[RMDB]
RNA sequence: GGGAACGACUCGAGUAGAGUCGAAAAAUUGUGUAUAUAUGCCACAUUUUUAAUCCAUUCAUCCACUGAAGGGAUCUAGGUUGGCUCCACAGUUUAGCUAUUGUGAAUGGUGCUGCUACAAACAUUGUGCAACCUCAUUAUUCGUAAUGAGGUUGCAAAAAGAAACAACAACAACAAC
Reactivity to DMS in 0.01 (KOAc 150mM, MgCl2 10mM, bicine 150mM(pH8.5), 24C), signal-to-noise 2, nucleotides 027 to 126: a000u000u000g000u000g010u000a080u000a180u010a120u000g010c090c000a030c060a030u000u000u010u000u000a100a110u000c000c000a120u000u000c030a030u010c180c160a090c280u000g000a030a040g000g000g000a000u000c120u000a010g010g010u000u020g030g010c070u000c140c030a030c050a010g020u000u010u010a080g030c050u000a060u000u010g000u000g000a030a050u000g000g020u010g000c060u010g010c060u000a030c200a070a060a140c140a090u010u000g030